[RMDB]
RNA sequence: GGGAACGACUCGAGUAGAGUCGAAAAGAUAUGGAGCUAGGGAGACGCUCCACAUUUACCCUAAGACAGCGGUCGGAAACGACCGUCGAGGGUACAUGUGGAGCGUCGAAGAACUAGCUCCUAAGUCGAUAUUGAAGUGGUUCGCCACUUCAAUAUCAAAAGAAACAACAACAACAAC
Reactivity to DMS in 0.01 (KOAc 150mM, MgCl2 10mM, bicine 150mM(pH8.5), 24C), signal-to-noise 3, nucleotides 027 to 126: g000a110u010a300u000g020g000a010g000c000u020a010g000g000g000a120g010a020c010g010c000u000c000c000a000c000a000u000u000u000a010c000c010c010u010a270a140g010a110c300a130g020c030g000g000u010c000g000g000a120a200a270c010g000a020c000c000g020u000c010g010a020g010g010g010u000a000c050a000u000g010u000g000g000a000g020c000g000u000c010g000a020a100g000a130a170c010u000a010g000c000u000c020c000u010a000a080g000u010c080